[RMDB]
RNA sequence: GGGAACGACUCGAGUAGAGUCGAAAAAUGCCAGUCUUCAAUCGGUCCAUUUACUAGACGCUAAAUAAUGUUGGUUGAGGCUGUUCUCGCGCGAGUUCGUCAUCUUCAUCGAGCAAGCCGAGCCUGCGACCGCUCUCUUCGUCCUCCGUCAUAACUAGAAUUUCAACCAGUUCGCUGGUUGAAAUUCAAAAGAAACAACAACAACAAC
Reactivity to 2A3 in 0.01 (KOAc 150mM, MgCl2 10mM, bicine 150mM(pH8.5), 24C), signal-to-noise 2, nucleotides 027 to 156: a000u110g010c020c000a030g010u050c020u180u040c020a000a030u030c060g050g000u010c000c050a020u070u090u130a160c080u100a040g080a220c040g020c100u120a070a090a170u160a110a070u120g070u170u100g040g000u000u000g000a000g020g000c030u020g050u130u000c030u000c030g040c050g020c010g030a060g070u010u010c010g110u070c030a210u040c130u270u130c050a080u100c020g000a000g030c000a000a020g020c030c000g000a000g000c010c030u020g060c000g020a020c010c010g000c020u040c000u000c000u020u040c020g040u010c010c000u050c000c070g080u070c120a060u090a230a050c050u090a110
An RNA of 207 nucleotides, treated with 2A3 and read out base by base. Values cover nucleotides 27 to 156. The 2A3 profile rests on 793 reads. The reactions ran in a buffer of 150 mM KOAc, 10 mM MgCl2 and 150 mM bicine (pH 8.5), at 24 C. The data come from the RNA Mapping Database (RMDB), library OK3TST.